[RMDB]
RNA sequence: GGGAACGACUCGAGUAGAGUCGAAAAGCGGUGGAACCCCCUCGUGGUGACACGAGCCCCCGUGGCCAAAAGCCCAGUGUUUACAGCACCUCUCACAUCCAGGGAAACCCCACCCUGGCGCUCACUCCUGAUUGGUAUACUUCGGUAUACCAAUCAGAAAAGAAACAACAACAACAAC
Reactivity to DMS in 0.01 (KOAc 150mM, MgCl2 10mM, bicine 150mM(pH8.5), 24C), signal-to-noise 1, nucleotides 027 to 126: g010c050g000g000u040g000g000a140a250c060c060c030c130c000u000c000g000u010g000g030u030g000a270c040a010c020g000a020g010c000c010c030c010c020g000u000g010g000c080c090a090a110a100a150g000c010c010c020a110g000u000g020u000u000u000a090c160a110g000c070a020c040c010u010c010u000c040a080c070a110u020c020c000a020g000g000g010a040a100a230c040c000c000c040a160c020c000c000u000g000g010c240g010c050u020c040a090c080u000c100
Structure probing data (DMS) for a 177-nucleotide construct. DMS (dimethyl sulfate) methylates the pairing face of unpaired adenines and cytosines.